[RMDB]
RNA sequence: GGGAACGACUCGAGUAGAGUCGAAAAGCGGUGGUGUAGCCGUGCGGCUCGUGAAGGAACGCCGCGGGACCGCUCCUUUGCCCGAAGCCUUUCCGGAGCUUGCUGCCAAAGGAACCGCAUCGCCGCCCCCGUAAAAUAGGUUCGCCUAUUUUACGGGAAAAGAAACAACAACAACAAC
Reactivity to 2A3 in 0.01 (KOAc 150mM, MgCl2 10mM, bicine 150mM(pH8.5), 24C), signal-to-noise 2, nucleotides 027 to 126: g000c010g000g000u040g020g010u020g010u010a030g030c050c040g040u090g010c040g000g000c000u010c010g030u050g090a070a040g030g020a050a000c030g000c000c020g020c000g010g000g010a080c010c050g070c060u050c040c030u100u060u210g010c040c000c000g000a010a000g010c000c080u110u160u050c030c020g010g010a020g010c010u010u040g010c010u010g020c030c010a150a170a120g040g000a050a050c060c040g000c000a010u000c010g000c010c000g000c040c010
Reactivity to DMS in 0.01 (KOAc 150mM, MgCl2 10mM, bicine 150mM(pH8.5), 24C), signal-to-noise 2, nucleotides 027 to 126: g020c000g000g030u000g000g050u000g020u000a040g010c000c020g010u010g020c040g040g020c010u000c090g000u000g010a300a210g030g010a030a040c300g000c080c180g000c000g000g000g030a120c130c080g000c010u000c030c050u000u010u020g000c020c060c030g000a100a030g010c040c110u010u000u000c080c040g010g020a280g000c010u000u000g010c010u000g000c040c100a060a070a130g010g000a050a070c090c060g030c000a010u000c000g000c030c010g000c030c120
An RNA of 177 nucleotides, treated with 2A3 and DMS and read out base by base. For DMS the reverse transcriptase was MarathonRT. For 2A3 the reverse transcriptase was SuperScript II with manganese. The data come from the RNA Mapping Database (RMDB), library RFMREP.